[RMDB]
Chemical mapping of a 177-nucleotide RNA with 2A3 and DMS.
For DMS the reverse transcriptase was MarathonRT.
As a SHAPE reagent, 2A3 marks flexible, mostly unpaired nucleotides at the ribose 2'-OH.
RNA sequence: GGGAACGACUCGAGUAGAGUCGAAAACGCGCGAUGACCGCGCUGAUCGACGAUGCGCACCUCGAUCGCGUGCGCCAGUUCAAGCAGAUGCUGUCGCGCUACCAGCGCAACCGCGACCUGAUCGCGACAGUCAUACCGUGUUCGCACGGUAUGACUGAAAAGAAACAACAACAACAAC
Reactivity to 2A3 in 0.01 (KOAc 150mM, MgCl2 10mM, bicine 150mM(pH8.5), 24C), signal-to-noise 4, nucleotides 027 to 126: c050g000c000g000c010g050a060u090g100a100c070c030g000c040g010c040u020g020a080u030c060g040a020c030g050a060u170g020c000g000c020a010c020c030u090c070g170a210u190c080g040c070g030u000g010c030g000c000c020a010g020u070u080c080a130a050g040c000a010g060a130u110g030c010u020g010u030c000g000c000g000c010u030a070c010c020a050g040c050g000c080a050a130c060c010g000c000g010a040c010c100u190g020a280u060c010g010c000g040a040
Reactivity to DMS in 0.01 (KOAc 150mM, MgCl2 10mM, bicine 150mM(pH8.5), 24C), signal-to-noise 4, nucleotides 027 to 126: c260g020c010g040c020g010a100u000g000a040c160c090g000c180g010c000u000g000a050u000c100g000a060c090g010a170u010g020c090g030c000a070c060c060u010c270g010a060u020c130g030c220g020u000g000c060g030c020c100a090g010u000u000c090a100a130g010c070a070g000a060u010g020c030u010g010u000c010g020c000g010c050u000a100c080c040a110g000c060g010c080a070a080c090c040g000c000g010a050c100c100u000g000a100u010c000g000c030g000a170
Values are in units of 0.01, from 0 to 300, in steps of 10.